[RMDB]
RNA sequence: GGGAACGACUCGAGUAGAGUCGAAAAGCUGUGGUUCGCCACAGCAAAAAGCGUACUACCUAGGAGGUAUCGGUCUUUGAUCUGGAUCCCAAAUAGGAUCCAGGGAGACCGUACUACCCACCCUAGGUAUCGCAAAAAACGCAUCUUCGGAUGCGAACGAGUUUAUCAGGUUCGCCUGAUAAACUCGAAAAGAAACAACAACAACAAC
Reactivity to 2A3 in 0.01 (KOAc 150mM, MgCl2 10mM, bicine 150mM(pH8.5), 24C), signal-to-noise 1, nucleotides 027 to 156: g000c000u000g000u010g010g030u040u120c230g130c080c010a000c010a020g000c010a000a000a000a000a000g040c050g000u070a120c050u000a000c010c000u000a000g000g000a050g010g010u030a040u300c010g000g010u000c010u190u170u060g060a110u030c000u000g010g000a010u010c050c050c000a100a300a020u300a110g020g000a000u010c000c000a000g000g000g000a000g000a000c000c000g010u000a000c010u000a000c000c000c000a070c000c000c010u000a000g010g000u000a000u010c000g000c000a000a080a080a000a000a000c000g000c010a000u000c000u030u020c150g130g000a010u000g000c040g010a020a010
Conditions: 150 mM KOAc, 10 mM MgCl2 and 150 mM bicine (pH 8.5), 24 C.
The record gives the reactivity of an RNA of 207 nucleotides to 2A3.
For 2A3, 1,177 sequencing reads were counted.
2A3 adducts were read by reverse transcription with SuperScript II with manganese.
Source: RMDB library RNAMAK, as collected in RNAgym.